[RMDB]
RNA sequence: GGGAACGACUCGAGUAGAGUCGAAAAAAAGAUAUGGAGUUGAGCUGUUAGGGAGAAACCUUUAAGGAAACAUGUCGGAAACGACAUGUUGUAAAGGUUGGACGAAGGCUACAACUCCUAAGUCAAACCUUGUACUUAUGUUCGCAUAAGUACAAGGAAAAGAAACAACAACAACAAC
Reactivity to 2A3 in 0.01 (KOAc 150mM, MgCl2 10mM, bicine 150mM(pH8.5), 24C), signal-to-noise 5, nucleotides 027 to 126: a000a000a020g090a040u090a040u130g000g000a010g000u020u000g010a010g000c040u070g170u300u100a070g020g130g030a250g210a130a030a030c010c020u050u030u070a200a090g300g000a080a030a000c000a000u010g000u000c010g020g010a070a060a040c000g000a000c000a000u000g000u000u000g000u000a010a000a000g000g000u040u020g000g010a010c030g060a050a010g020g010c030u100a090c020a000a000c000u000c000c000u010a040a010g020u010c020a070a060a100
Reactivity to DMS in 0.01 (KOAc 150mM, MgCl2 10mM, bicine 150mM(pH8.5), 24C), signal-to-noise 7, nucleotides 027 to 126: a050a070a090g010a030u000a300u010g000g000a020g020u000u000g010a080g010c010u000g040u010u000a160g000g000g020a300g000a170a020a020c000c000u000u000u000a050a130g030g030a170a010a000c010a000u010g010u000c010g000g000a080a050a150c000g000a010c000a000u000g010u000u000g000u000a020a010a010g000g010u000u000g000g020a270c040g000a110a230g000g000c000u000a100c010a010a020c010u000c000c000u000a010a060g010u010c030a110a120a160
Conditions: 150 mM KOAc, 10 mM MgCl2 and 150 mM bicine (pH 8.5), 24 C. This 177-nucleotide RNA was probed chemically with 2A3 and DMS. 2A3 adducts were read by reverse transcription with SuperScript II with manganese. For 2A3, 15,311 sequencing reads were counted.